[RMDB]
RNA sequence: GGGAACGACUCGAGUAGAGUCGAAAAGAUAUGGAGCGUCCUCAGCUUUGAUCUAUGGGUCGGAAACGACCCUGUAGGGAGCUGUCUUCGCUCCUAAGUCAAAACGGGAGGGGUUCGCCCCUCCCGAGACCUGAGUAUAGUUCGCUAUACUCAGGUCAAAAGAAACAACAACAACAAC
Reactivity to DMS in 0.01 (KOAc 150mM, MgCl2 10mM, bicine 150mM(pH8.5), 24C), signal-to-noise 2, nucleotides 027 to 126: g000a030u010a050u010g000g000a010g020c010g020u000c020c020u000c020a030g010c030u000u000u020g010a030u010c000u000a030u000g010g010g010u000c000g000g010a030a030a050c010g020a010c000c000c000u010g020u000a020g000g000g000a010g020c010u000g020u000c010u000u010c050g010c000u000c010c000u000a010a060g000u010c010a120a060a170a270c010g000g000g010a020g030g010g010g040u000u010c290g010c000c000c010c000u000c000c000c000g000a000
Reactivity to 2A3 in 0.01 (KOAc 150mM, MgCl2 10mM, bicine 150mM(pH8.5), 24C), signal-to-noise 2, nucleotides 027 to 126: g010a000u030a010u070g000g000a000g000c020g010u040c010c060u030c010a000g000c000u300u300u040g030a020u000c010u020a030u080g010g030g000u010c010g000g000a000a020a000c000g000a000c060c010c030u000g000u000a000g020g000g010a010g000c010u000g020u010c030u060u100c000g020c000u020c000c000u000a000a010g020u010c000a010a010a080a160c030g000g000g000a000g030g020g000g000u060u160c240g170c000c010c000c000u000c000c000c000g000a000
This 177-nucleotide RNA was probed chemically with DMS and 2A3. The RNA was probed in 150 mM KOAc, 10 mM MgCl2 and 150 mM bicine (pH 8.5) at 24 C. Values cover nucleotides 27 to 126. 2A3 adducts were read by reverse transcription with SuperScript II with manganese. For DMS the reverse transcriptase was MarathonRT. DMS (dimethyl sulfate) methylates the pairing face of unpaired adenines and cytosines. It was measured as part of the RMDB library TTRDES.